[RMDB]
RNA sequence: GGGAACGACUCGAGUAGAGUCGAAAAAGACUGAUAGGGUCAGUGGAUUCUGCUUGAUAUAAGCAGUAUGGAUCGGGUAUCGAUUCAAUGAUGGUCCUGUAGAGGACGUAGAUUAAUACGUCCUCAAGAAUAACUGAUUUUUCGAAAUCAGUUAUUCAAAAGAAACAACAACAACAAC
Reactivity to DMS in 0.01 (KOAc 150mM, MgCl2 10mM, bicine 150mM(pH8.5), 24C), signal-to-noise 7, nucleotides 027 to 126: a070g010a120c060u020g000a060u020a040g010g000g000u000c000a040g010u030g020g010a190u030u020c000u000g010c000u000u000g010a160u040a090u050a020a010g010c000a000g000u010a060u010g010g000a010u000c010g000g010g030u060a120u040c020g020a030u000u000c000a040a090u020g000a120u000g000g000u010c000c000u010g010u010a100g000a010g010g010a010c000g000u000a000g010a190u040u050a110a100u000a010c010g010u000c000c000u000c000a020a060
Reactivity to 2A3 in 0.01 (KOAc 150mM, MgCl2 10mM, bicine 150mM(pH8.5), 24C), signal-to-noise 9, nucleotides 027 to 126: a000g090a030c050u060g030a090u140a080g050g020g010u010c010a010g030u080g150g060a070u130u040c000u000g020c000u040u050g160a110u130a030u020a260a000g000c000a000g010u030a060u070g000g000a000u000c010g000g000g190u220a130u300c010g010a000u010u010c000a020a030u130g080a060u050g020g010u020c000c000u020g080u080a040g000a000g000g000a000c000g000u000a010g010a080u110u300a130a090u030a040c000g000u000c000c000u000c000a000a000